[RMDB]
RNA sequence: GGGAACGACUCGAGUAGAGUCGAAAACAGGCCGGGGACAUGGCCGAUCGGAUCGACGAUCUGCAGGAGGACCUCAACCGCAACGACUUCGCCGAGGACGUGCCGUUGGCCAGGCACGCCAUCGAUCUCAUCGUUGACGAUUCGUCGUCAACGAUGAAAAAGAAACAACAACAACAAC
Reactivity to 2A3 in 0.01 (KOAc 150mM, MgCl2 10mM, bicine 150mM(pH8.5), 24C), signal-to-noise 2, nucleotides 027 to 126: c040a040g030g030c000c010g000g020g020g040a030c040a180u150g130g000c040c020g020a000u030c030g030g070a190u100c100g170a170c010g010a100u000c030u050g010c040a030g010g130a040g020g040a080c010c000u030c040a060a050c010c040g050c080a030a030c050g030a030c030u080u050c040g050c110c010g010a100g000g020a210c000g000u020g000c000c000g020u060u080g040g030c020c010a030g020g000c000a010c020g000c000c010a110u010c020g050a100u040c000
Reactivity to DMS in 0.01 (KOAc 150mM, MgCl2 10mM, bicine 150mM(pH8.5), 24C), signal-to-noise 2, nucleotides 027 to 126: c090a070g010g020c020c050g000g000g000g000a180c110a030u000g000g030c000c020g000a060u020c030g000g110a120u010c170g010a090c060g010a030u020c030u010g000c040a060g020g020a120g010g000a170c020c000u010c060a060a080c050c030g010c040a010a100c050g000a110c070u000u000c100g040c080c040g000a060g010g000a060c010g030u000g000c030c000g000u010u000g020g010c020c050a270g000g000c000a010c020g020c040c000a020u000c050g000a160u000c150
Description:
The record gives the reactivity of an RNA of 177 nucleotides to 2A3 and DMS. Source: RMDB library OK2TRN, as collected in RNAgym. For 2A3 the reverse transcriptase was SuperScript II with manganese. Reactivities are given for positions 27 through 126. The RNA was probed in 150 mM KOAc, 10 mM MgCl2 and 150 mM bicine (pH 8.5) at 24 C.